[RMDB]
RNA sequence: GGGAACGACUCGAGUAGAGUCGAAAAAGACCUUCCGGGCCCUCUCCCGGAGUAUGGGAGACGUUCUCACGAGAUCCCGGCUUUCCGAGGUGAUCGAGGAGUACCGGACCGGGUAUGGGUUUACGGACGAAGUAGUUCAUUUCGAUGAACUACUUCGAAAAGAAACAACAACAACAAC
Reactivity to DMS in 0.01 (KOAc 150mM, MgCl2 10mM, bicine 150mM(pH8.5), 24C), signal-to-noise 4, nucleotides 027 to 126: a120g000a180c010c010u000u000c000c000g010g000g000c020c020c080u000c250u000c000c000c000g000g000a110g000u000a120u010g000g010g010a050g010a120c160g000u000u000c050u000c040a090c050g000a070g000a230u010c020c010c000g000g000c300u000u010u010c020c010g000a170g010g010u020g000a170u020c040g000a130g010g010a170g010u010a070c060c050g020g000a130c050c040g000g010g000u000a060u010g000g010g020u000u000u010a090c030g010g020a220
Reactivity to 2A3 in 0.01 (KOAc 150mM, MgCl2 10mM, bicine 150mM(pH8.5), 24C), signal-to-noise 2, nucleotides 027 to 126: a020g040a030c000c000u020u010c010c000g040g020g040c010c020c000u010c030u020c010c010c000g000g030a010g000u060a120u240g020g000g020a090g020a040c050g120u160u010c030u020c040a050c030g050a060g010a040u050c000c000c020g000g020c140u200u200u080c030c000g020a120g010g000u050g020a040u070c030g020a090g040g000a020g000u030a090c000c020g000g030a010c000c000g020g000g030u040a110u090g030g010g000u040u070u070a080c000g020g000a000